[RMDB]
RNA sequence: GGGAACGACUCGAGUAGAGUCGAAAAAAACCAGUAGUCCCACAAUAUGUUGCUGAUUGGGUAGAUAAUUCAAGAGAAUACGAUUACGAUUUUGAUGAAUGGUUUGAUUGCAGCAGCCAACCUGAUGAGAUUUACAAAUGGUUAAACUGUGAAAACAACCAAGACAGAAUUUCGAUUCUGUCUUGGUAAAAGAAACAACAACAACAAC
Reactivity to 2A3 in 0.01 (KOAc 150mM, MgCl2 10mM, bicine 150mM(pH8.5), 24C), signal-to-noise 1, nucleotides 027 to 156: a000a000a000c070c030a000g050u080a030g070u060c060c000c010a060c010a030a080u200a080u090g020u050u030g010c060u010g060a140u020u050g090g000g020u020a060g030a060u050a130a090u060u060c080a100a000g060a020g040a140a020u100a140c100g050a040u040u010a010c030g030a050u010u140u080u120g070a040u090g040a130a000u010g000g040u080u160u030g020a040u070u090g010c020a020g000c010a000g070c050c000a010a000c020c000u030g010a050u030g030a080g070a130u060u180u100a050c010a010a030a030u020g030g020u020u030a040a040a070c030u070g000u130g170a000a300a000a000c010a000
Reactivity to DMS in 0.01 (KOAc 150mM, MgCl2 10mM, bicine 150mM(pH8.5), 24C), signal-to-noise 2, nucleotides 027 to 156: a090a070a050c070c040a110g050u000a180g000u000c010c000c010a150c090a070a150u020a100u010g030u010u010g000c010u010g000a110u000u000g020g000g030u000a060g000a130u000a080a140u000u000c080a070a070g000a110g020a130a040u000a060c120g010a180u010u000a120c040g000a300u000u000u000u000g020a080u000g010a060a060u020g000g010u000u000u000g010a080u010u000g010c000a020g020c010a070g000c080c050a060a060c030c020u000g030a120u000g010a160g020a130u000u000u000a110c120a020a100a110u010g000g000u000u000a090a030a040c050u000g010u010g000a100a020a020a050c080a070